This 177-nucleotide RNA was probed chemically with 2A3 and DMS.
For DMS, 1,122 sequencing reads were counted.
RNA sequence: GGGAACGACUCGAGUAGAGUCGAAAAUUGCUAAUGGACAGGCGAUUAAUUCUUUAAUUCCACCAGCAAAUGAAUAAAUGUUAAUUAAAAGUUAUGACACACCUGCAGACUUUAUACAACAAACUGCCCAUGUAACAUUCUUCGGAAUGUUACAUGGAAAAGAAACAACAACAACAAC
Reactivity to 2A3 in 0.01 (KOAc 150mM, MgCl2 10mM, bicine 150mM(pH8.5), 24C), signal-to-noise 2, nucleotides 027 to 126: u070u010g030c010u100a140a000u110g000g010a070c080a110g010g050c040g020a030u030u130a050a080u190u070c030u050u170u030a060a050u060u000c010c000a040c000c010a030g010c020a020a090a160u150g040a100a040u140a130a130a030u130g010u040u110a100a070u110u180a020a130a070a090g010u050u070a170u230g050a030c020a000c020a040c050c010u060g000c020a010g010a030c000u040u080u070a080u060a090c110a110a000c020a080a070a000c040u040g040c000
Reactivity to DMS in 0.01 (KOAc 150mM, MgCl2 10mM, bicine 150mM(pH8.5), 24C), signal-to-noise 2, nucleotides 027 to 126: u000u020g010c020u000a070a090u010g010g000a010c220a070g000g010c200g050a080u000u010a030a110u020u020c110u010u000u010a140a150u000u000c010c010a040c030c050a050g000c010a010a030a050u000g010a090a040u010a030a100a080u010g000u000u000a080a090u010u020a070a070a040a120g000u000u000a050u010g000a050c050a070c080a060c050c050u000g010c040a030g000a070c050u000u010u030a060u000a120c150a090a070c090a030a090a110c120u000g010c230